[RMDB]
RNA sequence: GGGAACGACUCGAGUAGAGUCGAAAAACGGGCACGUUCGCGUGCCCGUAAUGAACGCUGCAACGCGCAGAGAUCUCGCGAGUGCGCGAAUGCACAAAGAAACAUUUCCAGUUUUCGAACUGGAAAAGAUAUAGCAACUCUUCGGAGUUGCUAUAUCAAAAGAAACAACAACAACAAC
Reactivity to 2A3 in 0.01 (KOAc 150mM, MgCl2 10mM, bicine 150mM(pH8.5), 24C), signal-to-noise 2, nucleotides 027 to 126: a020c010g000g010g050c030a010c020g020u090u080c220g000c000g090u000g020c030c000c000g000u000a000a010u010g000a050a020c080g050c190u080g000c000a000a070c000g010c000g000c030a000g090a040g030a190u060c040u050c110g110c030g060a100g150u040g000c010g000c010g050a090a050u080g010c040a000c030a020a080a030g160a050a160a010c050a030u020u020u020c000c000a000g010u010u000u030u090c130g050a000a000c010u010g040g000a000a000a000a010
Reactivity to DMS in 0.01 (KOAc 150mM, MgCl2 10mM, bicine 150mM(pH8.5), 24C), signal-to-noise 3, nucleotides 027 to 126: a020c010g000g010g020c010a010c010g050u000u010c180g030c030g040u000g000c020c010c010g000u000a010a040u000g000a110a090c160g000c150u010g000c010a050a170c050g000c020g050c020a040g010a130g010a140u000c060u000c120g020c100g000a130g010u000g010c000g000c020g000a020a080u000g010c010a020c100a130a070a080g000a140a100a080c150a110u000u000u000c000c000a000g010u000u000u000u000c180g000a010a010c000u000g000g000a000a010a020a040
This 177-nucleotide RNA was probed chemically with 2A3 and DMS. As a SHAPE reagent, 2A3 marks flexible, mostly unpaired nucleotides at the ribose 2'-OH. 2A3 adducts were read by reverse transcription with SuperScript II with manganese. The RNA was probed in 150 mM KOAc, 10 mM MgCl2 and 150 mM bicine (pH 8.5) at 24 C.